[RMDB]
RNA sequence: GGGAACGACUCGAGUAGAGUCGAAAAGAAAGGCGAAGGGUGGAUACGUGAGCCGAAAAGCGUAGAAAUAAGCCGACACACGAAUUUAAGGCGAUUUGUGUAGAAGAAAAGAAAAGAAAAGAAAAGAGGGUAAUCUAAUGUUCGCAUUAGAUUACCCAAAAGAAACAACAACAACAAC
Reactivity to 2A3 in 0.01 (KOAc 150mM, MgCl2 10mM, bicine 150mM(pH8.5), 24C), signal-to-noise 1, nucleotides 027 to 126: g000a060a100a000g000g040c050g000a020a000g010g000g090u100g020g000a000u000a030c010g010u050g010a010g030c020c010g010a070a110a000a010g000c000g040u130a040g080a060a240a050u090a130a050g060c030c000g030a000c020a000c000a000c090g000a000a030u130u040u070a090a000g110g020c010g010a000u020u060u000g010u000g000u000a000g020a110a000g000a020a090a030a000g140a020a040a030a000g080a040a170a030a000g130a000a130a000a000g070a020
Reactivity to DMS in 0.01 (KOAc 150mM, MgCl2 10mM, bicine 150mM(pH8.5), 24C), signal-to-noise 2, nucleotides 027 to 126: g020a040a130a050g000g000c030g010a060a090g010g000g080u020g030g010a120u010a050c040g000u010g000a180g030c030c020g050a030a090a050a140g000c050g020u000a020g010a100a070a090u010a130a150g000c030c020g030a160c120a080c000a000c070g030a080a040u000u040u020a120a050g000g020c060g030a000u000u000u000g020u000g010u000a020g000a050a090g020a030a060a070a120g000a030a050a070a170g000a070a050a050a270g000a060a030a130a040g000a220